[RMDB]
RNA sequence: GGGAACGACUCGAGUAGAGUCGAAAAGCAAUGGCAGCCUAAUUAGGCUUGCCGCACUGAUUGGCUGACGUCAGAUACGCCGACCAGUGACAAACUUAUCCGACUGGCACCCAAAGCCGUCUGUCGCAGCGGGUGUAAGAUUUUUUAAGACAGACUUGAACAUACGUUUGUUCGCAAACGUAUGUUCAAAAGAAACAACAACAACAAC
Reactivity to 2A3 in 0.01 (KOAc 150mM, MgCl2 10mM, bicine 150mM(pH8.5), 24C), signal-to-noise 4, nucleotides 027 to 156: g090c050a040a130u110g000g000c000a000g000c010c000u190a300a300u240u300a060g040g000c020u090u150g000c000c000g000c000a000c000u000g000a010u000u000g000g000c000u010g000a010c020g000u000c000a000g010a010u010a010c020g000c000c000g000a000c010c000a000g000u030g080a100c140a040a120a010c060u240u180a020u040c000c000g000a000c000u000g030g000c000a010c000c000c000a000a000a000g010c000c010g000u000c000u000g010u000c000g000c010a000g000c010g010g020g000u000g000u000a010a000g000a010u060u100u100u140u180u300a050a000g000a000c000a000g000a000c000u000u010

Notes
The record gives the reactivity of an RNA of 207 nucleotides to 2A3. The RNA was probed in 150 mM KOAc, 10 mM MgCl2 and 150 mM bicine (pH 8.5) at 24 C.